[RMDB]
RNA sequence: GGGAACGACUCGAGUAGAGUCGAAAAAAUCGUCGACGCAUCGACGACGGUCCUGCCAUGAGACCGUAACGAGGACAUGUCGCCUCGAAUGGCGUCGGGGAGCCGGCAGCUUACCCCAAGGAUGCGCAAAAGAAUGAAACGUUCGCGUUUCAUUCAACACUACAUGGAAGUUCGCUUCCAUGUAGUGAAAAGAAACAACAACAACAAC
Reactivity to DMS in 0.01 (KOAc 150mM, MgCl2 10mM, bicine 150mM(pH8.5), 24C), signal-to-noise 1, nucleotides 027 to 156: a020a110u020c070g000u010c000g010a050c050g010c090a130u010c010g020a050c000g010a020c000g030g010u010c030c000u000g050c070c200a160u000g000a050g040a010c020c030g040u000a030a100c040g000a080g040g000a020c060a180u000g020u000c100g000c010c000u020c030g020a130a070u000g020g020c040g030u010c010g020g020g040g030a140g010c070c030g050g000c040a070g010c040u020u010a130c010c010c010c020a180a290g000g020a020u000g010c020g070c040a030a040a170a090g020a060a010u000g010a020a000a000c000g050u000u000c300g050c050g000u010u010u020c010a000u000u000c010a050a130
Reactivity to 2A3 in 0.01 (KOAc 150mM, MgCl2 10mM, bicine 150mM(pH8.5), 24C), signal-to-noise 4, nucleotides 027 to 156: a000a000u040c010g020u000c010g020a050c070g040c150a110u060c020g020a010c000g010a010c000g020g000u000c010c000u010g010c010c000a050u090g030a020g010a080c020c000g010u020a020a020c020g000a000g020g020a030c060a200u200g040u190c110g000c020c020u000c010g010a030a040u050g030g000c030g030u060c060g000g000g010g000a050g060c020c010g060g010c040a010g010c030u080u100a190c000c000c010c040a010a020g060g020a050u090g040c060g000c080a050a010a030a100g010a010a000u010g010a000a000a000c010g030u050u070c160g020c010g100u000u010u000c000a000u000u000c000a000a000
Chemical mapping of a 207-nucleotide RNA with DMS and 2A3. For 2A3, 3,590 sequencing reads were counted. The data come from the RNA Mapping Database (RMDB), library M2RFPK. The reactions ran in a buffer of 150 mM KOAc, 10 mM MgCl2 and 150 mM bicine (pH 8.5), at 24 C. For DMS, 2,445 sequencing reads were counted.